Overview: The record gives the reactivity of an RNA of 177 nucleotides to 2A3 and DMS. The 2A3 profile rests on 5,859 reads. It was measured as part of the RMDB library OK2TRN. DMS adducts were read by reverse transcription with MarathonRT.
RNA sequence: GGGAACGACUCGAGUAGAGUCGAAAACGAGGAGCGUCCCGCGUUCCGUGUGCUCAUGGAUCAGUUGGCUCUUGUGGCCCAAACGCUAACCGACUAAGGAGCGGACCAGAUUGCGGCACCCAUCGCCGCCCAUAUCCUGUUUCGACAGGAUAUGGGCAAAAGAAACAACAACAACAAC
Reactivity to 2A3 in 0.01 (KOAc 150mM, MgCl2 10mM, bicine 150mM(pH8.5), 24C), signal-to-noise 5, nucleotides 027 to 126: c040g040a070g070g030a050g030c030g030u080c020c000c020g050c000g030u050u020c040c010g050u060g060u050g040c030u040c110a080u110g040g060a250u050c020a040g040u060u070g050g000c010u030c020u120u160g060u160g080g000c030c020c020a050a050a010c020g010c010u040a080a090c020c020g100a100c100u110a100a120g080g000a020g010c040g000g000a030c020c010a040g040a140u060u120g010c010g010g000c020a060c010c030c020a060u110c050g020c050c040
Reactivity to DMS in 0.01 (KOAc 150mM, MgCl2 10mM, bicine 150mM(pH8.5), 24C), signal-to-noise 5, nucleotides 027 to 126: c050g010a100g000g000a050g000c060g000u000c050c030c030g010c080g010u000u000c020c060g010u000g000u000g020c060u010c040a070u000g010g010a100u000c030a080g020u000u000g000g000c010u010c080u010u000g000u010g010g010c100c020c020a030a050a090c120g000c030u000a040a090c040c040g020a080c100u020a100a120g030g000a080g010c020g010g000a060c070c080a100g000a090u000u010g010c050g010g000c030a060c060c040c030a090u000c080g000c090c110